[RMDB]
Source information
Structure probing data (2A3 and DMS) for a 207-nucleotide construct. The 2A3 profile rests on 502 reads.
RNA sequence: GGGAACGACUCGAGUAGAGUCGAAAAGUACAAGCGGUUUGAUCGAGAGAUUGGUAGGUUUGAUUAUUUCGAUUGUCGCCAGUCUGGGCGUUGUCUAUAUGAUCGUAUGGAGUGAACGCACGAUGUUCGACCAGUGUGAUCUGAUGUCGAGUUCACGGCAUGUCGGCAAAUUCGUUUGCCGACAUGCAAAAGAAACAACAACAACAAC
Reactivity to 2A3 in 0.01 (KOAc 150mM, MgCl2 10mM, bicine 150mM(pH8.5), 24C), signal-to-noise 1, nucleotides 027 to 156: g170u160a020c080a090a040g010c050g020g110u040u110u150g060a090u120c060g030a000g000a030g000a150u020u000g060g000u050a110g000g080u090u070u140g080a060u000u070a100u140u210u070c020g010a010u000u140g120u170c000g000c000c000a050g020u070c080u090g010g070g010c000g060u020u030g040u000c000u020a080u020a040u240g030a010u140c070g040u050a130u070g120g030a050g030u030g020a020a010c010g050c000a050c150g050a040u040g030u090u050c000g000a000c010c010a110g000u080g090u050g300a270u060c050u010g000a040u110g030u040c040g070a020g030u080u090c010a000c100g020
Reactivity to DMS in 0.01 (KOAc 150mM, MgCl2 10mM, bicine 150mM(pH8.5), 24C), signal-to-noise 1, nucleotides 027 to 156: g000u020a060c020a080a190g030c010g060g040u000u000u000g000a080u010c000g060a160g020a070g010a070u000u000g000g030u010a050g030g030u000u010u020g030a050u000u000a140u020u010u020c020g010a050u000u010g030u000c100g030c030c010a110g030u010c030u000g040g010g020c050g040u000u000g020u020c020u000a100u020a080u010g020a100u000c050g020u000a060u010g020g020a230g030u000g000a030a040c030g010c010a110c010g000a080u010g030u020u010c300g010a050c020c030a250g030u020g020u010g000a090u010c020u020g010a100u000g030u000c010g040a080g010u010u000c020a090c060g010
For DMS the reverse transcriptase was MarathonRT.